[RMDB]
RNA sequence: GGGAACGACUCGAGUAGAGUCGAAAAGGUUGGCUCAUCCUGAGACCGGGGAGCUUCGACGAUCUCUUGUCUCUCCUGAAGGAGGAAGGAGCUCUCGAACGCUCUCCCGACCGCUCGGAUGGGCCGCGCCCGACAUUAAGUUCGCUUAAUGUCGGGCAAAAGAAACAACAACAACAAC
Reactivity to 2A3 in 0.01 (KOAc 150mM, MgCl2 10mM, bicine 150mM(pH8.5), 24C), signal-to-noise 1, nucleotides 027 to 126: g100g010u110u070g010g020c000u000c010a000u000c010c060u180g000a000g010a020c030c020g000g010g000g000a010g010c050u010u000c000g010a040c120g000a020u000c000u020c000u020u100g300u090c070u000c010u010c100c020u150g190a300a170g030g000a000g000g000a000a020g000g010a000g020c010u000c000u010c000g000a000a010c070g000c010u000c060u070c010c000c000g010a010c020c050g100c020u040c000g020g020a010u000g000g000g000c010c000g000c000